An RNA of 177 nucleotides, treated with DMS and 2A3 and read out base by base. 2A3 adducts were read by reverse transcription with SuperScript II with manganese. The reactions ran in a buffer of 150 mM KOAc, 10 mM MgCl2 and 150 mM bicine (pH 8.5), at 24 C.
RNA sequence: GGGAACGACUCGAGUAGAGUCGAAAAUCUAUCACGAGCCCAUGUUUACGACACGAAUGGGCUGUUGCAAAUUACGUAUAGCUCUUGCAACAUCGUGUCGAAACGUUCCCAAGCUAUACGCCACAAACUUCCACUCCAUAUUCGUAUGGAGUGGAAGAAAAGAAACAACAACAACAAC
Reactivity to DMS in 0.01 (KOAc 150mM, MgCl2 10mM, bicine 150mM(pH8.5), 24C), signal-to-noise 3, nucleotides 027 to 126: u000c020u010a060u010c070a100c060g000a070g000c020c010c160a110u000g000u010u010u000a160c020g010a020c010a030c050g010a120a100u000g030g000g000c160u000g000u010u000g010c000a050a040a180u000u010a080c000g010u010a010u000a010g000c000u000c290u000u000g010c000a000a020c030a050u000c000g010u000g030u000c050g000a020a040a050c050g000u000u000c000c010c000a150a070g000c000u000a010u010a000c010g000c190c130a100c190a040a090a100
Reactivity to 2A3 in 0.01 (KOAc 150mM, MgCl2 10mM, bicine 150mM(pH8.5), 24C), signal-to-noise 4, nucleotides 027 to 126: u010c010u010a080u100c060a020c200g020a010g030c000c040c030a030u120g060u040u110u060a070c050g020a020c010a000c060g070a110a110u130g060g160g050c080u020g000u000u000g000c000a020a050a080u230u080a070c010g010u010a000u010a000g000c010u050c040u180u030g010c000a000a010c000a030u030c010g000u000g000u020c000g020a070a030a010c020g000u010u000c000c000c010a000a010g000c000u010a010u000a010c010g020c020c020a090c040a030a080a020